[RMDB]
RNA sequence: GGGAACGACUCGAGUAGAGUCGAAAAUUGGCUCAUGCAGGUUCUAGAGUCGGAGGGUAAUGCGUGAGGCUGGCUUCACAGAGCAGCGACUACUUCCCGCUUACAGCAGUGGACGGAUCACGGUUUAGCGUCGCUCAGAACCACUAUGGCCUGCUGGGUAGGGCAUUAUGUUCGCAUAAUGCCCUACAAAAGAAACAACAACAACAAC
Reactivity to 2A3 in 0.01 (KOAc 150mM, MgCl2 10mM, bicine 150mM(pH8.5), 24C), signal-to-noise 2, nucleotides 027 to 156: u150u090g040g020c060u090c180a010u070g020c070a030g020g030u050u130c000u120a080g000a000g050u220c200g030g010a060g000g170g020u070a040a030u170g100c010g000u010g000a020g100g100c020u060g070g000c040u090u060c030a040c010a100g110a010g010c010a000g000c000g070a030c020u070a070c010u110u090c030c010c010g010c020u010u070a030c030a040g050c000a030g010u040g080g020a010c040g000g050a030u080c030a030c030g000g080u000u050u140a050g070c030g080u020c030g000c020u010c040a000g010a000a000c030c050a030c070u060a060u090g010g010c050c030u000g000c010u000g030g220